The record gives the reactivity of an RNA of 207 nucleotides to DMS and 2A3. For DMS the reverse transcriptase was MarathonRT. The RNA was probed in 150 mM KOAc, 10 mM MgCl2 and 150 mM bicine (pH 8.5) at 24 C. Values cover nucleotides 27 to 156.
[RMDB]
RNA sequence: GGGAACGACUCGAGUAGAGUCGAAAAAUCCGCAGAGCUUGCAAAAACCAUCGCGGAGCAGCAAGCAAGGAUCGCUAAAGGAGAGAUGGGGUACAUUGACGCCGCGAAGGAUAAAACCCUUUCCGGUGGGUACAGCAGCAAAACGAAGGAUCGCGUAUCGAGAUAUUGAUUUCGAUCAAUAUCUCGAAAAAGAAACAACAACAACAAC
Reactivity to DMS in 0.01 (KOAc 150mM, MgCl2 10mM, bicine 150mM(pH8.5), 24C), signal-to-noise 1, nucleotides 027 to 156: a070u000c000c000g000c110a140g060a300g020c000u000u040g000c070a090a080a090a130a130c050c000a040u000c120g010c090g000g020a200g020c140a110g000c000a070a040g000c000a090a090g020g000a020u020c060g000c090u000a040a040a120g030g020a120g010a120g040a170u000g040g010g010g000u000a020c020a040u000u000g000a150c060g050c020c000g000c060g000a060a020g040g000a070u000a050a020a170a300c050c010c050u000u000u000c110c000g000g040u020g000g000g010u010a060c040a040g000c070a160g000c010a040a010a050a050c000g060a070a100g000g000a060u000c040g000c100g000u000a260
Reactivity to 2A3 in 0.01 (KOAc 150mM, MgCl2 10mM, bicine 150mM(pH8.5), 24C), signal-to-noise 1, nucleotides 027 to 156: a000u040c040c000g040c050a060g000a010g050c000u000u050g020c070a030a060a140a090a130c040c040a110u180c060g100c100g090g000a030g020c000a000g000c000a010a000g020c000a030a070g050g000a040u050c070g000c100u120a120a080a000g030g000a020g040a010g010a070u050g010g010g010g020u020a020c010a050u110u050g100a080c040g000c000c000g020c050g000a000a000g050g010a010u160a080a100a080a090c040c000c000u020u080u010c010c010g010g000u040g000g000g040u090a040c020a020g050c000a000g000c000a010a000a010a080c070g030a050a020g040g050a080u070c070g050c050g070u070a050